An RNA of 207 nucleotides, treated with 2A3 and DMS and read out base by base. Reactivities are given for positions 27 through 156. 2A3 adducts were read by reverse transcription with SuperScript II with manganese. For DMS the reverse transcriptase was MarathonRT. The data come from the RNA Mapping Database (RMDB), library OK3TST.
RNA sequence: GGGAACGACUCGAGUAGAGUCGAAAAGCAGUAAAUCAAAUGUGUAUGGGCCCACUGUGGGAAUGACUUGAUAUGCAGACAUUUUUAGGUUAAUCUGUACAAGAAUCAGGGUUGUGCAGCACAUCUCAAAUCAUAGUGUCCACAACAGUCACGUGAAAUCAGUAGGUGGUUUCGACCACCUACUGAUAAAAGAAACAACAACAACAAC
Reactivity to 2A3 in 0.01 (KOAc 150mM, MgCl2 10mM, bicine 150mM(pH8.5), 24C), signal-to-noise 2, nucleotides 027 to 156: g080c040a000g000u150a050a100a140u120c100a060a060a150u110g050u040g050u040a110u090g010g040g040c000c010c030a020c060u050g000u100g040g000g050a030a060u090g070a060c030u070u050g050a050u100a040u150g020c020a020g080a060c010a090u100u110u070u100u240a030g040g020u010u080a070a090u010c000u010g010u030a020c000a060a050g030a120a070u090c050a020g110g000g000u040u010g000u010g000c020a010g030c020a010c000a080u040c070u020c090a020a060a020u050c020a020u030a110g030u040g000u030c010c030a030c020a150a000c040a030g090u080c020a010c060g050u050g040a150a200
Reactivity to DMS in 0.01 (KOAc 150mM, MgCl2 10mM, bicine 150mM(pH8.5), 24C), signal-to-noise 1, nucleotides 027 to 156: g050c070a040g050u000a030a190a090u010c050a040a090a120u000g030u000g040u010a120u010g010g000g020c000c000c050a010c120u010g010u000g020g060g010a090a120u000g030a060c010u000u000g030a150u000a060u010g000c030a140g020a120c030a090u050u000u000u000u010a120g060g000u000u020a070a140u010c010u000g010u000a050c040a040a150g000a120a130u000c080a130g000g030g020u000u000g010u000g020c020a020g000c060a070c020a010u000c070u000c030a000a040a030u010c080a060u000a110g040u000g020u000c010c030a090c010a030a030c060a010g010u000c020a020c050g010u010g010a080a130